An RNA of 177 nucleotides, treated with 2A3 and read out base by base. Values cover nucleotides 27 to 126. The reactions ran in a buffer of 150 mM KOAc, 10 mM MgCl2 and 150 mM bicine (pH 8.5), at 24 C. Source: RMDB library OK1LIB, as collected in RNAgym.

[RMDB]
RNA sequence: GGGAACGACUCGAGUAGAGUCGAAAAUGCUAACAGCUCUCCUAUUCAUCGAUUCCGUCAGACUCUGACUUCUGCCAGGGUAAGAGACUUUCUGACUCGUGUAUAUACUCCCAGGCAACCCGGUUCAGUCUGCAAAUCCGUUCGCGGAUUUGCAGACAAAAGAAACAACAACAACAAC
Reactivity to 2A3 in 0.01 (KOAc 150mM, MgCl2 10mM, bicine 150mM(pH8.5), 24C), signal-to-noise 1, nucleotides 027 to 126: u090g020c030u070a120a000c030a050g000c030u000c020u000c030c010u090a060u080u160c000a070u030c070g030a110u160u070c020c020g020u000c000a000g020a060c000u020c000u090g030a050c000u110u010c000u120g050c020c020a000g040g070g000u000a060a000g080a000g020a080c090u050u100u060c080u030g030a040c000u000c050g030u030g030u030a010u000a020u000a100c050u090c000c040c030a020g000g000c020a070a090c000c000c000g000g060u030u010c000a000